[RMDB]
RNA sequence: GGGAACGACUCGAGUAGAGUCGAAAAUCGAACUUUAAACCAACUUUGUCAAAGUAAAGAUAACUCCAGAAUGUGGAAGUUACACUAGUUAGUUGUCUUCUGCUAAUUCGUACAAAUGUGUAACUAAGACUCUGUUUUAAAUUUCACAAAUACAGAACCCUAGGUACUACUUCGGUAGUACCUAGGGAAAAGAAACAACAACAACAAC
Reactivity to 2A3 in 0.01 (KOAc 150mM, MgCl2 10mM, bicine 150mM(pH8.5), 24C), signal-to-noise 2, nucleotides 027 to 156: u100c000g020a000a050c040u060u090u110a140a100a060c080c060a050a120c090u210u060u090g080u090c070a150a050a050g030u020a140a180a020g040a110u090a040a000c030u040c050c010a030g010a160a120u110g070u030g010g010a040a000g000u040u010a010c000a000c020u020a050g030u040u040a010g000u000u070g040u050c050u220u030c040u080g000c000u020a040a030u060u050c050g080u090a080c030a000a130a100u150g000u020g000u000a030a020c000u000a020a020g040a030c000u000c070u120g140u040u040u020u150a110a170a140u070u060u080c070a050c010a030a120a020u220a080c010a060g080a080a030